An RNA of 207 nucleotides, treated with DMS and 2A3 and read out base by base.
For 2A3 the reverse transcriptase was SuperScript II with manganese.
Source: RMDB library RNAMAK, as collected in RNAgym.
Conditions: 150 mM KOAc, 10 mM MgCl2 and 150 mM bicine (pH 8.5), 24 C.
RNA sequence: GGGAACGACUCGAGUAGAGUCGAAAAGGGGUCCAUACUCAGUACACAUCCUACCCACCGUAAUGAACUACUACUGAAGCCUCCACGGUAGCAUUACGAGGGAUGUGGAACUGUAUGGACGGAGGCACCCAAAGACACGAGCUUCGGCUCGUGUCAACAUUGCGUUAUACUUCGGUAUAACGCAAUGAAAAGAAACAACAACAACAAC
Reactivity to DMS in 0.01 (KOAc 150mM, MgCl2 10mM, bicine 150mM(pH8.5), 24C), signal-to-noise 2, nucleotides 027 to 156: g000g010g040g020u000c020c000a020u000a000c000u000c020a130g010u000a220c020a020c010a030u000c020c030u000a050c020c010c000a300c040c020g040u010a010a060u010g010a260a230c100u020a300c000u000a020c010u040g040a060a090g010c050c010u030c030c020a300c100g000g010u000a010g010c020a020u000u000a020c000g000a220g020g000g010a030u000g010u020g010g010a070a160c070u000g030u000a010u000g000g000a020c000g010g000a010g010g020c000a100c000c000c010a070a110a140g000a020c000a030c000g010a000g010c000u000u010c300g060g050c000u010c010g090u000g010u000c000a020a130
Reactivity to 2A3 in 0.01 (KOAc 150mM, MgCl2 10mM, bicine 150mM(pH8.5), 24C), signal-to-noise 4, nucleotides 027 to 156: g110g000g020g010u000c000c000a010u000a000c020u020c030a010g010u020a010c000a000c000a000u010c000c020u070a200c120c120c060a110c120c030g000u010a000a010u060g070a150a150c090u150a030c000u000a010c010u220g020a130a010g020c010c000u000c000c000a010c020g000g000u000a000g010c000a000u000u000a010c000g000a030g010g010g000a000u010g000u010g010g000a000a010c000u010g000u010a000u000g010g000a000c010g000g000a000g000g000c010a030c000c000c000a050a130a010g010a000c000a000c000g000a000g010c010u090u240c290g140g000c010u010c000g000u000g000u000c000a000a000